[RMDB]
RNA sequence: GGGAACGACUCGAGUAGAGUCGAAAAGUGCGACUGGGUCGCAAACUGAAUCCCGGCACGCAGGCGAAAUCCAACCACGCCGCAACUUACACAACUGGACGCCCAGGAGCACGGGACAGAUGGCCUGAUGGUAUAUCAGUUUCGACUGAUAUACCAUAAAAGAAACAACAACAACAAC
Reactivity to DMS in 0.01 (KOAc 150mM, MgCl2 10mM, bicine 150mM(pH8.5), 24C), signal-to-noise 9, nucleotides 027 to 126: g020u000g000c010g000a080c010u020g010g010g020u010c050g030c060a050a060a090c060u000g010a140a140u000c010c010c000g000g000c050a070c120g020c090a100g000g010c020g010a090a110a090u030c080c070a090a120c080c080a110c060g000c020c020g010c080a080a070c110u020u040a080c130a080c120a070a080c100u010g000g000a140c110g000c030c010c020a070g000g000a130g000c030a030c060g010g000g010a060c100a050g010a090u020g000g000c000c010u010g000
Reactivity to 2A3 in 0.01 (KOAc 150mM, MgCl2 10mM, bicine 150mM(pH8.5), 24C), signal-to-noise 9, nucleotides 027 to 126: g030u010g010c010g020a030c050u180g050g100g060u130c050g010c090a040a060a020c050u060g030a030a060u050c000c000c000g000g030c060a050c050g050c050a040g020g000c020g040a090a040a050u060c040c020a020a050c030c020a070c030g030c020c020g010c020a050a030c020u100u210a060c060a020c010a110a180c060u060g050g050a040c040g030c010c010c010a030g030g010a040g020c050a040c100g000g000g010a020c040a060g100a060u070g070g000c010c010u040g040

Structure probing data (DMS and 2A3) for a 177-nucleotide construct.
DMS adducts were read by reverse transcription with MarathonRT.
The reactions ran in a buffer of 150 mM KOAc, 10 mM MgCl2 and 150 mM bicine (pH 8.5), at 24 C.
For DMS, 25,346 sequencing reads were counted.